RNA sequence: GGGAACGACUCGAGUAGAGUCGAAAAGAUAUGGAUGUCUUUAAGGGAGGAGUGAUAGACGUUUGACGACGGUCGGAAACGACCGUCCGAGUCUAAUACUCCAUCGAUCUUAAAGACAUCCUAAGUCGUAUACCCAUCAGUUCGCUGAUGGGUAUACAAAAGAAACAACAACAACAAC
Reactivity to 2A3 in 0.01 (KOAc 150mM, MgCl2 10mM, bicine 150mM(pH8.5), 24C), signal-to-noise 1, nucleotides 027 to 126: g040a050u160a090u300g000g010a000u010g000u000c000u020u000u000a010a000g000g020g060a000g030g020a000g000u040g040a090u010a030g010a000c090g070u180u290u300g060a040c000g010a000c020g000g020u020c010g000g000a100a080a050c010g010a010c030c000g010u000c000c000g000a000g020u000c000u000a030a040u030a060c000u000c000c000a050u160c010g040a030u030c010u000u010a000a000a020g000a010c010a000u020c000c010u010a010a010g000u000c010
Reactivity to DMS in 0.01 (KOAc 150mM, MgCl2 10mM, bicine 150mM(pH8.5), 24C), signal-to-noise 2, nucleotides 027 to 126: g000a100u000a300u000g010g010a000u000g010u000c000u010u000u000a020a010g000g000g000a020g040g000a010g020u010g000a120u000a000g010a030c000g000u010u000u030g020a300c300g000a000c000g020g010u010c000g020g000a110a090a220c000g030a000c000c020g010u000c000c010g000a070g030u000c000u000a040a120u010a010c000u010c000c000a190u000c130g030a060u020c000u000u000a000a000a000g000a010c000a010u000c010c000u000a010a090g010u000c050